Structure probing data (DMS and 2A3) for a 177-nucleotide construct. DMS adducts were read by reverse transcription with MarathonRT. Source: RMDB library TTRDEL, as collected in RNAgym.
RNA sequence: GGGAACGACUCGAGUAGAGUCGAAAAGAUAUGGACACAGGGAGCUGUCCAGUCGGAAACGACUGGGCAGCGAAGAACUGUAAGUCCUAAGUCAAAAGAUCACUGGUUCUUCGGAACCAGUGAUCAACAUAGCAGCUUAGUUCGCUAAGCUGCUAUGAAAAGAAACAACAACAACAAC
Reactivity to DMS in 0.01 (KOAc 150mM, MgCl2 10mM, bicine 150mM(pH8.5), 24C), signal-to-noise 3, nucleotides 027 to 126: g010a040u000a290u010g000g000a010c020a070c000a020g000g010g000a090g010c010u000g000u000c010c010a000g000u010c000g000g010a070a080a150c020g010a010c000u000g020g000g010c000a000g010c030g000a040a070g010a100a170c010u000g000u000a060a100g000u000c000c010u000a020a100g000u010c040a100a080a140a110g000a000u000c010a010c000u000g010g000u000u000c000u000u000c200g010g000a000a000c000c000a020g010u000g000a000u000c000a020a090
Reactivity to 2A3 in 0.01 (KOAc 150mM, MgCl2 10mM, bicine 150mM(pH8.5), 24C), signal-to-noise 1, nucleotides 027 to 126: g010a010u070a010u120g000g000a010c010a000c000a060g020g010g000a060g090c000u010g010u000c000c000a000g030u020c010g000g070a080a060a010c030g000a000c000u000g020g000g000c030a000g000c000g000a000a000g000a010a000c000u020g010u100a100a090g000u000c000c000u000a070a010g040u050c020a000a050a090a180g010a010u000c000a000c000u000g000g000u030u000c030u070u120c300g030g000a010a000c000c000a000g000u000g000a000u000c000a000a000